[RMDB]
An RNA of 177 nucleotides, treated with DMS and read out base by base.
The data come from the RNA Mapping Database (RMDB), library OK2TRN.
DMS adducts were read by reverse transcription with MarathonRT.
RNA sequence: GGGAACGACUCGAGUAGAGUCGAAAAUGCAGGACCAUCCAAAGUCGUUACGGAUCUUAGGCACAUCCAAAUGGCACAUAAGUAAUGAUUUUUAAGGAACAUCAGAUAAAACUCAAUAUGUUAGCCAUAAACUGGAGUGGUUCGCCACUCCAGUUUAAAAAGAAACAACAACAACAAC
Reactivity to DMS in 0.01 (KOAc 150mM, MgCl2 10mM, bicine 150mM(pH8.5), 24C), signal-to-noise 1, nucleotides 027 to 126: u000g020c060a060g030g000a160c060c040a150u000c070c050a060a040a060g010u010c030g020u010u000a050c070g000g000a020u000c180u000u000a010g000g040c000a080c120a070u010c070c070a030a160a120u000g020g040c010a100c070a010u000a030a100g000u000a090a050u000g000a010u000u000u010u000u000a090a160g000g010a040a040c070a090u010c040a070g020a090u000a040a010a010a050c040u010c060a040a060u020a010u000g000u010u010a080g010c060c020a080